An RNA of 177 nucleotides, treated with DMS and 2A3 and read out base by base. DMS adducts were read by reverse transcription with MarathonRT. The 2A3 profile rests on 2,454 reads. Reactivities are given for positions 27 through 126.
[RMDB]
RNA sequence: GGGAACGACUCGAGUAGAGUCGAAAAUGGAACCGCAGUUGGUUCCUCGGAACUAAACUCGUGGUUCCUGUGGUUCACACCUGACCUCCUGAGCAGAAAAGAAAAAAGAAGGCGGCUCGGAGGAGCGCCUAACCUAGGAGUUCGCUCCUAGGUUAGGAAAAGAAACAACAACAACAAC
Reactivity to DMS in 0.01 (KOAc 150mM, MgCl2 10mM, bicine 150mM(pH8.5), 24C), signal-to-noise 4, nucleotides 027 to 126: u010g000g010a010a020c000c000g040c020a010g010u000u010g000g000u010u000c000c010u010c300g030g010a010a020c000u000a020a050a020c010u000c160g050u000g000g010u000u000c000c000u000g010u000g020g010u000u000c090a100c100a080c040c030u010g010a160c010c010u000c000c010u000g020a010g010c040a100g000a120a090a130a150g020a000a080a090a120a080a130g010a160a120g010g010c130g000g040c000u000c020g010g030a070g010g000a030g000c110g000
Reactivity to 2A3 in 0.01 (KOAc 150mM, MgCl2 10mM, bicine 150mM(pH8.5), 24C), signal-to-noise 3, nucleotides 027 to 126: u060g000g000a000a000c000c000g020c010a010g010u010u040g000g020u010u000c010c000u020c110g090g010a000a000c010u070a220a070a010c020u100c130g000u010g020g000u000u000c020c000u030g010u030g000g070u130u130c050a030c030a030c110c010u050g110a120c000c000u010c000c030u120g020a010g000c040a020g190a120a170a100a020g180a050a240a060a070a050a000g110a080a040g170g100c140g040g000c020u000c000g010g000a030g010g010a010g020c050g030